RNA sequence: GGGAACGACUCGAGUAGAGUCGAAAAAGUUUGUAUUAUCCCUGUUAAAUUCUCCCAGGGGAUGCCUAUUGGUGUUUACAGACGAGUAUGGUAUAGACCAUAUAUUACUAUUCUCUCUCUCAGGAGAGGAGAAUAGAUGCAUACAAAGGAGAAGCAAUCCACGUAAUGAUUUCGAUCAUUACGUGGAAAAAGAAACAACAACAACAAC
Reactivity to DMS in 0.01 (KOAc 150mM, MgCl2 10mM, bicine 150mM(pH8.5), 24C), signal-to-noise 2, nucleotides 027 to 156: a190g020u000u000u010g030u000a150u000u010a080u000c020c000c020u000g020u000u010a050a040a130u000u000c010u000c000c010c020a160g040g030g020g000a040u010g000c060c090u000a120u000u010g000g020u010g010u000u000u000a130c110a050g010a070c070g000a150g020u000a030u000g020g010u000a160u000a130g000a110c000c000a000u000a000u000a100u000u000a140c010u000a040u000u000c000u000c000u000c000u000c030u000c200a170g050g000a060g020a040g060g020a020g000a010a010u000a010g000a130u000g030c060a110u000a090c080a090a070a050g010g000a060g000a050a220g020c060a110a270
Reactivity to 2A3 in 0.01 (KOAc 150mM, MgCl2 10mM, bicine 150mM(pH8.5), 24C), signal-to-noise 1, nucleotides 027 to 156: a000g030u090u070u170g040u050a090u150u020a160u120c000c000c000u000g000u020u120a180a190a150u050u020c040u000c000c000c020a010g090g000g000g000a030u040g010c010c000u140a220u180u190g010g000u050g020u050u200u030a070c060a040g070a030c010g000a060g080u000a000u010g010g000u050a190u040a230g060a080c000c000a010u000a010u000a010u000u180a040c000u020a000u000u030c010u000c000u000c000u000c000u010c090a090g140g000a010g060a040g020g000a000g040a000a000u000a010g000a020u040g070c100a090u060a140c030a050a100a000g010g000a060g000a080a000g080c010a020a040
Conditions: 150 mM KOAc, 10 mM MgCl2 and 150 mM bicine (pH 8.5), 24 C. Chemical mapping of a 207-nucleotide RNA with DMS and 2A3. For 2A3, 537 sequencing reads were counted. The data come from the RNA Mapping Database (RMDB), library OK3TST.